About this RNA: An RNA of 177 nucleotides, treated with DMS and 2A3 and read out base by base. High DMS reactivity at an A or C suggests that its Watson-Crick edge is free. 2A3 adducts were read by reverse transcription with SuperScript II with manganese. The RNA was probed in 150 mM KOAc, 10 mM MgCl2 and 150 mM bicine (pH 8.5) at 24 C. Values cover nucleotides 27 to 126. The data come from the RNA Mapping Database (RMDB), library M2PK90. For 2A3, 3,181 sequencing reads were counted.

RNA sequence: GGGAACGACUCGAGUAGAGUCGAAAAGUUAUGGAAAACGUCUAAGCUACCACUACAACAACAAUGCUGGACGGUGAUGGUUCGACUUACUCGAAACCAUCACGUAGUGGUAGUCGUUCCCAUUCAACUUAGUCACUAGCUUCGGCUAGUGACUAAGAAAAGAAACAACAACAACAAC
Reactivity to DMS in 0.01 (KOAc 150mM, MgCl2 10mM, bicine 150mM(pH8.5), 24C), signal-to-noise 2, nucleotides 027 to 126: g000u000u000a150u010g000g000a150a100a050a080c040g000u000c030u000a080a120g020c000u000a020c010c010a030c050u010a020c030a120a070c160a060a090c080a080a070u000g020c100u000g000g000a060c060g010g040u000g000a000u000g010g000u000u000c000g010a050c190u000u010a060c250u000c000g000a020a060a060c020c010a020u020c020a010c020g010u000a010g010u000g000g030u000a050g010u000c010g010u000u000c010c000c010a100u000u000c090a070a160
Reactivity to 2A3 in 0.01 (KOAc 150mM, MgCl2 10mM, bicine 150mM(pH8.5), 24C), signal-to-noise 3, nucleotides 027 to 126: g030u040u070a080u250g120g070a120a040a040a050c000g030u010c030u060a130a050g030c000u020a010c000c010a030c030u030a010c020a140a010c010a020a000c010a100a170u210g020c050u110g050g000a020c070g020g010u010g010a030u030g000g010u010u020c000g030a010c030u120u160a040c030u080c020g040a120a030a030c000c000a010u020c000a010c020g040u030a020g000u000g000g000u000a000g000u000c000g010u020u010c000c000c000a010u100u120c020a050a060